[RMDB]
RNA sequence: GGGAACGACUCGAGUAGAGUCGAAAAGAUAUGGACCUGAACUACGAACAGAUGAGCGAAGAACUUACUCUAGGCUCGGAAACGAGCCUAGAGUAAGGGAGCUCACGAAUUUCGCAGGUCCUAAGUCCAGAUAGUUCUGGUUCGCCAGAACUAUCUGAAAAGAAACAACAACAACAAC
Reactivity to DMS in 0.01 (KOAc 150mM, MgCl2 10mM, bicine 150mM(pH8.5), 24C), signal-to-noise 2, nucleotides 027 to 126: g020a190u000a300u000g010g000a050c000c000u010g000a090a110c130u020a300c000g010a010a030c280a140g030a160u000g000a010g010c030g000a070a170g010a060a300c010u000u000a000c000u000c010u010a010g020g000c000u040c010g010g030a090a050a200c010g090a010g000c000c000u000a000g010a000g010u010a000a000g000g000g000a050g020c010u010c000a000c000g000a110a180u020u000u000c000g010c010a010g000g030u000c020c010u000a010a090g000u010c010